[RMDB]
RNA sequence: GGGAACGACUCGAGUAGAGUCGAAAAGGGUGAGGCAUCAUAUUAUAUAGACCUAGCCAACAAGAUAAAGGCUUUGCCCGAAUUGAGCAAUGUUAAGACUAAGCCGAUUGGAUAUGCGUUGGCCGCGGGAUACAGGGAUCUUCGGAUCCCUGUAUCCAAAAGAAACAACAACAACAAC
Reactivity to 2A3 in 0.01 (KOAc 150mM, MgCl2 10mM, bicine 150mM(pH8.5), 24C), signal-to-noise 2, nucleotides 027 to 126: g010g000g040u080g000a000g000g090c000a030u040c020a090u020a030u300u160a060u050a060u090a090g020a000c000c000u000a060g000c000c000a000a000c030a010a120g080a040u200a100a010a080g000g000c010u040u010u010g000c000c050c000g040a060a100u030u100g000a150g040c020a110a120u120g080u060u270a230a080g130a080c090u020a080a030g000c000c020g000a020u000u110g010g000a000u000a060u240g040c120g110u090u000g040g000c060c000g060c060g060
Reactivity to DMS in 0.01 (KOAc 150mM, MgCl2 10mM, bicine 150mM(pH8.5), 24C), signal-to-noise 2, nucleotides 027 to 126: g010g100g000u010g050a080g020g000c030a050u030c050a150u030a040u010u000a060u030a200u020a070g010a100c030c020u000a070g000c000c010a040a040c130a040a020g000a120u010a120a040a110g000g010c000u000u000u000g000c080c020c030g010a050a080u040u020g030a070g000c110a090a080u000g000u020u020a110a120g010a040c040u010a040a120g000c000c000g020a120u040u020g000g000a070u040a070u000g000c090g040u000u010g000g000c020c060g040c110g010

Conditions: 150 mM KOAc, 10 mM MgCl2 and 150 mM bicine (pH 8.5), 24 C.
Structure probing data (2A3 and DMS) for a 177-nucleotide construct.
Values cover nucleotides 27 to 126.
2A3 adducts were read by reverse transcription with SuperScript II with manganese.
For DMS the reverse transcriptase was MarathonRT.
For 2A3, 693 sequencing reads were counted.